Chemical mapping of a 177-nucleotide RNA with DMS.
Conditions: 150 mM KOAc, 10 mM MgCl2 and 150 mM bicine (pH 8.5), 24 C.
RNA sequence: GGGAACGACUCGAGUAGAGUCGAAAAUGCACAGGGAAGUGUCUGGCGCUGAAUGCAAUAGUAAUGCAGUGGAGAAAUCCUGCUGUAAACCUAGGCCUUCGUUUCUCCGUCUGUAAAAUGAAGUCAGGUAACGACCCACAUUCGUGUGGGUCGUUACAAAAGAAACAACAACAACAAC
Reactivity to DMS in 0.01 (KOAc 150mM, MgCl2 10mM, bicine 150mM(pH8.5), 24C), signal-to-noise 1, nucleotides 027 to 126: u010g030c060a080c100a110g000g030g010a110a040g040u010g040u010c010u010g000g020c080g010c040u010g000a060a020u000g040c110a130a070u010a090g000u000a030a160u000g010c010a010g040u000g020g010a020g030a110a040a100u000c060c060u000g060c060u000g010u000a030a090a090c240c060u010a140g000g000c070c100u040u000c140g030u000u000u000c010u000c060c010g030u010c050u010g010u030a030a020a050a050u010g000a080a130g020u000c050a050g000
Source: RMDB library OK2TST, as collected in RNAgym.